RNA sequence: GGGAACGACUCGAGUAGAGUCGAAAACGAUCAUGAUAUGGUCACGAACAAUGCUGAUUGAUUCGCGGGUCAGAUAACGAACAAGAGUGAACGGACCUUCCAUGAUGAGAUCGGGGGAUUCGGAAGCCAGAGCCUGAUUGAUGAAGGUUACCGAAUGGCUGACUGAAUCAUUCGUGAUUCAGUCAGCAAAAGAAACAACAACAACAAC
Reactivity to 2A3 in 0.01 (KOAc 150mM, MgCl2 10mM, bicine 150mM(pH8.5), 24C), signal-to-noise 1, nucleotides 027 to 156: c030g030a010u090c000a000u000g090a010u000a070u260g050g000u000c020a030c090g060a030a000c110a090a130u180g020c060u050g030a200u020u000g050a100u100u080c000g000c030g040g180g010u000c000a000g040a120u140a210a030c090g000a120a000c010a080a000g060a010g050u080g060a030a000c010g030g010a000c000c000u010u010c030c000a050u070g000a000u050g050a010g020a010u010c000g000g000g010g000g000a000u010u010c000g030g000a010a000g110c040c030a060g020a000g120c000c000u030g050a090u140u110g030a080u120g010a030a050g000g000u000u080a000c000c000g070a010a000u020g110

Structure probing data (2A3) for a 207-nucleotide construct. The data come from the RNA Mapping Database (RMDB), library OK3TST. The reactions ran in a buffer of 150 mM KOAc, 10 mM MgCl2 and 150 mM bicine (pH 8.5), at 24 C. For 2A3, 486 sequencing reads were counted.